[RMDB]
RNA sequence: GGGAACGACUCGAGUAGAGUCGAAAAACGUCUGAGAUUAGGCCAUAAAAGGUCAGAUCGCAUUGUUGUUUACAUCUGGAAUGGCAAUGUUAAAUUUAUCAGAUUAGUUAAUUUGAUUAGCCGUGUGUUAUGGCGUACAAAUUGAUGAAAUUCAAAUCGUACAGUUGUUCUUCGGAACAACUGUACGAAAAGAAACAACAACAACAAC
Reactivity to 2A3 in 0.01 (KOAc 150mM, MgCl2 10mM, bicine 150mM(pH8.5), 24C), signal-to-noise 1, nucleotides 027 to 156: a000c060g120u000c080u130g100a010g030a100u050u060a080g000g000c010c020a030u150a090a080a000a000g030g030u000c020a050g000a060u030c000g000c010a000u000u000g000u000u000g040u000u000u000a170c070a100u020c080u290g040g030a050a040u020g020g000c000a000a060u030g000u040u050a000a050a160u250u230u040a110u030c000a000g010a000u000u020a030g030u000u010a030a030u000u040u000g170a210u020u070a040g000c070c020g050u140g000u040g080u160u300a160u200g000g020c000g000u010a030c030a030a040a090u000u070g000a000u000g020a050a050a050u090u100c020a140a090a120u000